[RMDB]
RNA sequence: GGGAACGACUCGAGUAGAGUCGAAAAGUGGUCCAAUAGCUCAGUAAAGGUCUACUGAAUGAAAGGGAGACUUCCCUUUGCUCACAAUGAGGUCAUUCCUCAUGUUUUUGCCAAUGUAUUUUUCCUGCCUGGAUAAUCCACCCUCUGACCUUUAUCCUGCUUCCAUAAAGUUCGCUUUAUGGAAGCAAAAAGAAACAACAACAACAAC
Reactivity to 2A3 in 0.01 (KOAc 150mM, MgCl2 10mM, bicine 150mM(pH8.5), 24C), signal-to-noise 3, nucleotides 027 to 156: g040u030g000g050u070c030c000a040a100u070a080g040c020u040c050a030g030u040a060a110a030g030g020u000c000u040a030c030u050g050a050a100u150g040a080a020a010g060g010g000a080g050a110c060u070u110c020c010c050u010u010u020g020c030u040c000a060c010a040a220u000g010a000g030g030u070c050a090u210u210c010c000u010c020a040u030g070u020u060u030u110u090g020c030c030a080a030u100g030u030a130u090u110u010u060u050c010c000u010g030c000c020u000g010g010a020u020a080a040u100c030c010a060c050c020c000u010c080u060g090a100c030c000u060u070u080a030u100c010c020
Reactivity to DMS in 0.01 (KOAc 150mM, MgCl2 10mM, bicine 150mM(pH8.5), 24C), signal-to-noise 3, nucleotides 027 to 156: g020u000g010g030u000c030c010a070a110u000a110g020c030u000c020a080g010u010a020a050a090g030g000u010c010u000a140c030u000g030a050a190u010g010a090a090a120g000g020g000a070g010a180c100u000u000c000c010c020u000u000u000g000c060u010c070a060c100a090a080u010g000a060g000g010u000c200a190u010u000c000c000u000c020a040u000g010u000u010u010u000u000g020c010c050a070a120u000g010u000a070u000u000u000u000u000c000c040u010g010c060c050u020g050g020a080u000a040a100u000c040c030a070c060c010c010u000c050u000g000a080c020c030u020u000u000a130u000c040c050